RNA sequence: GGGAACGACUCGAGUAGAGUCGAAAAUGCGCUGGCCGCUGCUGUACUUGCUGACGUUGCUGCAUUUGUCUCAGAUGUUUUCGCUGCGGCUGCCGAUGCGGCUGCCGCCUUUUCCGACGCUGCCGCCGAAAGUUCAUUAGUUCGCUAAUGAACUUUCAAAAGAAACAACAACAACAAC
Reactivity to 2A3 in 0.01 (KOAc 150mM, MgCl2 10mM, bicine 150mM(pH8.5), 24C), signal-to-noise 9, nucleotides 027 to 126: u120g000c020g000c040u060g050g010c020c010g020c020u040g010c020u060g020u090a100c020u070u100g030c020u030g040a050c030g100u130u080g010c030u020g010c020a050u070u060u140g080u010c030u010c040a040g020a100u070g070u040u060u050u100c060g010c050u050g010c000g010g000c020u010g000c010c010g060a090u190g060c060g020g000c010u020g010c010c000g010c010c000u040u040u030u010c010c010g010a010c020g010c030u020g010c000c010g010c000c010
Reactivity to DMS in 0.01 (KOAc 150mM, MgCl2 10mM, bicine 150mM(pH8.5), 24C), signal-to-noise 8, nucleotides 027 to 126: u010g000c050g020c040u010g000g010c040c050g020c030u000g000c030u000g010u010a070c070u010u010g010c030u010g000a110c090g010u010u010g010c030u000g010c050a060u000u000u010g010u000c030u010c050a090g010a090u010g010u000u010u010u000c090g020c090u010g010c020g010g000c010u000g010c020c050g010a130u020g010c070g010g010c000u000g010c050c030g000c000c060u000u000u010u000c030c020g000a080c050g010c040u010g010c020c020g000c100c180